RNA sequence: GGGAACGACUCGAGUAGAGUCGAAAAUCGGAAAAGUUCGCUUUUCCGAAAAGAAAGCGCCAAAAGGUGGCGGCCAAAAGCCCGCGCGGCACCGGCGCCCGCAAAGCUAAUGCUUCGGCAUUAGCAAGCAUAUUUAAAGGUUCGCCUUUAAAUAUGCAAAAGAAACAACAACAACAAC
Reactivity to DMS in 0.01 (KOAc 150mM, MgCl2 10mM, bicine 150mM(pH8.5), 24C), signal-to-noise 3, nucleotides 027 to 126: u010c010g000g010a010a000a000a000g010u010u020c240g010c010u010u000u000u000c000c000g000a010a020a070a150g010a100a090a140g010c020g030c010c010a110a070a070a160g010g030u000g010g020c030g010g000c040c070a060a120a120a300g010c150c050c040g030c080g010c040g000g000c020a030c090c050g000g010c030g010c030c050c040g010c130a060a070a100g000c000u000a000a010u000g000c010u000u000c150g030g000c000a000u000u000a000g010c000a050a020
Reactivity to 2A3 in 0.01 (KOAc 150mM, MgCl2 10mM, bicine 150mM(pH8.5), 24C), signal-to-noise 3, nucleotides 027 to 126: u020c000g000g020a010a000a020a000g020u080u120c120g050c100u000u000u020u000c000c000g000a000a070a010a000g010a010a060a000g010c010g010c010c020a090a100a050a060g090g020u040g060g030c010g010g040c020c020a080a250a030a060g040c010c030c010g020c020g010c070g070g000c020a010c030c020g010g010c000g010c000c010c020g120c040a130a070a000g000c000u000a000a000u010g000c000u020u090c280g120g010c000a010u000u010a000g000c010a000a000